[RMDB]
RNA sequence: GGGAACGACUCGAGUAGAGUCGAAAAUUUUACGCUUGUCUCGUUGAGCAGCAGCGUAAUGCUGCGAUCGUGGAUCAUCGCCUCACGCCAAGUGGCAAAGAGUCCGGUUUGCUGAUCUGGGCUCCAAUAUUAGGACUGCAUUCGUGCAGUCCUAAUAAAAAGAAACAACAACAACAAC
Reactivity to DMS in 0.01 (KOAc 150mM, MgCl2 10mM, bicine 150mM(pH8.5), 24C), signal-to-noise 2, nucleotides 027 to 126: u000u000u000u000a090c020g010c010u010u000g010u020c090u010c040g030u000u020g010a040g010c000a190g010c000a020g000c020g040u010a080a070u000g020c000u000g010c010g000a030u000c040g060u010g030g000a040u000c080a140u010c080g010c050c010u000c010a040c040g010c270c010a040a090g010u000g000g020c130a060a120a110g010a050g000u000c000c030g010g000u000u000u010g010c170u010g000a110u000c020u000g040g030g000c010u000c010c130a060a110
Reactivity to 2A3 in 0.01 (KOAc 150mM, MgCl2 10mM, bicine 150mM(pH8.5), 24C), signal-to-noise 1, nucleotides 027 to 126: u040u030u000u070a000c010g010c030u070u050g050u040c040u000c080g180u200u290g000a050g030c070a000g000c000a000g000c000g060u060a000a110u280g010c000u000g010c010g060a030u050c070g150u170g090g010a070u160c010a010u080c090g020c000c030u000c020a000c000g000c000c000a120a050g000u090g090g020c020a170a130a000g020a010g000u000c000c050g040g020u050u080u060g040c040u130g020a070u110c010u020g000g000g000c010u000c000c000a040a050